RNA sequence: GGGAACGACUCGAGUAGAGUCGAAAAGAUAUGGAACGUACAAGGGAGCGUAUCGGAAACGAUAAGCGCAUCGAUCUUGACGUUCCUAAGUCAAAGAUGUUACUCAGGUUCGCCUGAGUAACAUCAACUUCAAACGCUACUUCGGUAGCGUUUGAAGAAAAGAAACAACAACAACAAC
Reactivity to DMS in 0.01 (KOAc 150mM, MgCl2 10mM, bicine 150mM(pH8.5), 24C), signal-to-noise 1, nucleotides 027 to 126: g040a040u010a300u000g000g000a000a000c000g030u030a070c000a010a000g020g000g000a030g030c000g030u000a030u000c000g000g010a080a080a120c000g010a000u000a000a060g060c010g000c010a260u000c180g010a120u020c000u000u000g000a010c000g010u000u010c000c000u000a020a080g000u000c030a070a080a180g010a000u000g000u000u000a000c030u000c000a040g000g000u020u000c200g000c040c000u020g000a030g000u000a000a000c000a000u000c000a070a040
Reactivity to 2A3 in 0.01 (KOAc 150mM, MgCl2 10mM, bicine 150mM(pH8.5), 24C), signal-to-noise 2, nucleotides 027 to 126: g020a000u050a030u170g000g000a000a010c030g000u250a300c040a020a000g040g040g010a050g020c000g030u030a020u020c000g050g030a050a000a040c010g000a000u050a160a170g100c000g000c100a200u270c030g130a110u070c000u010u050g010a010c000g010u020u010c000c000u010a070a000g000u000c000a060a060a140g020a000u000g000u000u020a000c000u000c020a000g000g080u040u150c300g120c070c010u000g000a000g010u000a000a000c000a000u010c000a000a000